The data come from the RNA Mapping Database (RMDB), libraries RFM100 and RFMREP. An RNA of 177 nucleotides, treated with DMS and 2A3 and read out base by base. The reactions ran in a buffer of 150 mM KOAc, 10 mM MgCl2 and 150 mM bicine (pH 8.5), at 24 C. DMS adducts were read by reverse transcription with MarathonRT.

RNA sequence: GGGAACGACUCGAGUAGAGUCGAAAAGAAAGAAAGAAAGCAAGGAGCGUGUUUAACAGCUGAGUGAUUUAAAGCAAUCAAAUUCCUUUGGCUUUAAAUCAUGCAGCUGUUGAACAAGCUCUUGCAACCCAUUCAUUACUUUCGAGUAAUGAAUGGGAAAAGAAACAACAACAACAAC
Reactivity to DMS in 0.01 (KOAc 150mM, MgCl2 10mM, bicine 150mM(pH8.5), 24C), signal-to-noise 6, nucleotides 027 to 126: g010a100a070a110g020a070a070a100g010a130a120a120g000c000a020a020g020g010a010g010c000g020u000g010u000u000u000a000a000c000a000g000c000u000g000a150g030u010g000a010u010u000u000a000a010a010g020c000a150a090u030c100a030a050a100u020u040c200c160u000u010u010g020g020c000u000u010u000a000a000a000u000c000a000u010g000c000a010g000c000u000g000u000u000g000a000a000c000a030a020g000c000u000c000u000u000g000c000a090a120
Reactivity to 2A3 in 0.01 (KOAc 150mM, MgCl2 10mM, bicine 150mM(pH8.5), 24C), signal-to-noise 9, nucleotides 027 to 126: g080a010a040a010g130a030a070a010g110a080a110a010g000c020a010a030g210g040a040g070c010g000u010g000u000u000u000a000a000c000a000g000c000u000g010a020g040u000g000a000u000u000u010a010a000a000g000c020a030a050u160c060a070a160a120u230u250c070c020u150u060u110g070g000c000u000u000u010a000a000a000u000c000a000u020g000c000a000g000c000u000g000u000u000g000a000a000c000a000a000g000c000u000c000u000u000g000c000a010a050